[RMDB]
RNA sequence: GGGAACGACUCGAGUAGAGUCGAAAAACGGGCGGCAACUGCGAAUUGACCGAGCCCGGCCGGACAGUCGUCAAGCACGACGUCACCAUUGCCGCACCGCUGAACCUGCCGGCCACGAUGCCCGAGCCGACAUCCGUAGAUUCGUCUACGGAUGUCGAAAAGAAACAACAACAACAAC
Reactivity to 2A3 in 0.01 (KOAc 150mM, MgCl2 10mM, bicine 150mM(pH8.5), 24C), signal-to-noise 6, nucleotides 027 to 126: a010c020g000g000g010c000g010g000c010a020a010c110u100g050c110g170a160a170u140u150g080a130c020c030g020a020g050c010c050c000g000g000c010c010g040g020a070c030a080g030u040c010g010u020c120a160a050g080c140a050c040g010a020c000g030u040c010a050c060c030a060u000u140g010c000c010g040c080a210c060c020g000c060u080g020a030a040c010c000u030g000c020c000g030g020c000c000a140c100g050a030u130g030c000c000c000g030a030g020c000
Reactivity to DMS in 0.01 (KOAc 150mM, MgCl2 10mM, bicine 150mM(pH8.5), 24C), signal-to-noise 2, nucleotides 027 to 126: a090c020g030g000g010c000g010g050c010a000a060c170u000g040c080g020a090a060u000u030g040a060c060c040g010a140g040c050c080c010g000g020c030c080g010g010a130c100a040g040u000c020g000u000c050a100a120g050c100a040c010g010a020c030g010u020c070a080c050c030a160u000u010g020c000c000g000c030a090c000c010g010c050u010g000a190a070c040c000u000g000c000c030g000g000c060c040a100c010g000a130u000g000c000c010c040g000a060g050c080